The record gives the reactivity of an RNA of 177 nucleotides to DMS and 2A3. The 2A3 profile rests on 3,118 reads. For DMS, 1,368 sequencing reads were counted. It was measured as part of the RMDB library TTRDEL. The reactions ran in a buffer of 150 mM KOAc, 10 mM MgCl2 and 150 mM bicine (pH 8.5), at 24 C.
RNA sequence: GGGAACGACUCGAGUAGAGUCGAAAAGAUAUGGAACAUCAUUGCAUGUCGUUGAAAUCGGAAACGAUGGAGACAUGAUGAGUGUUCCUAAGUCAAACGUCCCUCGCCGUUCGCGGCGAGGGACGAACGAUACACCAUUCUUCGGAAUGGUGUAUCGAAAAGAAACAACAACAACAAC
Reactivity to DMS in 0.01 (KOAc 150mM, MgCl2 10mM, bicine 150mM(pH8.5), 24C), signal-to-noise 1, nucleotides 027 to 126: g010a050u020a300u000g000g010a000a000c000a030u000c010a030u000u000g020c020a000u020g010u010c000g000u010u000g000a070a100a020u010c000g000g000a140a120a220c020g000a000u000g000g000a070g000a010c000a000u010g000a030u000g000a060g010u020g000u000u020c000c010u000a010a120g000u000c030a060a100a180c010g050u010c000c000c000u000c020g070c000c030g000u000u010c300g020c040g000g040c000g000a000g000g010g020a000c000g000a010a020
Reactivity to 2A3 in 0.01 (KOAc 150mM, MgCl2 10mM, bicine 150mM(pH8.5), 24C), signal-to-noise 2, nucleotides 027 to 126: g020a020u060a060u190g000g010a010a010c010a020u030c020a010u040u290g260c010a000u030g000u030c020g290u300u090g030a010a040a000u010c000g030g000a020a050a070c020g010a000u000g000g030a050g000a010c000a000u030g000a000u000g010a060g300u080g000u000u010c000c000u010a150a010g080u030c030a130a030a110c010g000u060c000c000c020u050c030g000c060c020g100u120u100c300g020c030g090g010c000g040a020g000g050g020a000c000g000a000a020